[RMDB]
RNA sequence: GGGAACGACUCGAGUAGAGUCGAAAACGCUGGGCUGUCCAUCCCAAGAUGAGCCGUGAGAGACGUUGAAAUGGCUGAAGCGCGCACGGCCAUGGAGUCUCCCGGUUGAGAGAUGGACAGCCUGUGCUGAAGCGCGCACGGCAACCGAAAGGUGCGAGUUACCCUGUUUGUUCGCAAACAGGGUAACAAAAGAAACAACAACAACAAC
Reactivity to 2A3 in 0.01 (KOAc 150mM, MgCl2 10mM, bicine 150mM(pH8.5), 24C), signal-to-noise 3, nucleotides 027 to 156: c010g000c010u020g010g000g000c000u000g010u000c000c000a010u020c040c030c040a060a070g130a190u300g050a030g010c000c020g050u300g010a300g000a000g000a020c030g080u180u010g000a010a020a000u000g000g040c000u000g010a290a040g020c010g000c000g020c000a000c000g000g020c000c000a010u010g000g010a010g010u000c000u020c000c000c000g010g040u030u070g100a190g000a000g000a020u010g000g000a000c000a000g000c000c000u000g000u000g000c000u010g010a100a030g010c000g000c000g000c030a010c030g000g010c010a000a010c000c000g020a070a030a020g010g000u020g010c020g000a080

Chemical mapping of a 207-nucleotide RNA with 2A3. The RNA was probed in 150 mM KOAc, 10 mM MgCl2 and 150 mM bicine (pH 8.5) at 24 C. Reactivities are rounded to 0.1 and cut off at 0 and 3. 2A3 adducts were read by reverse transcription with SuperScript II with manganese.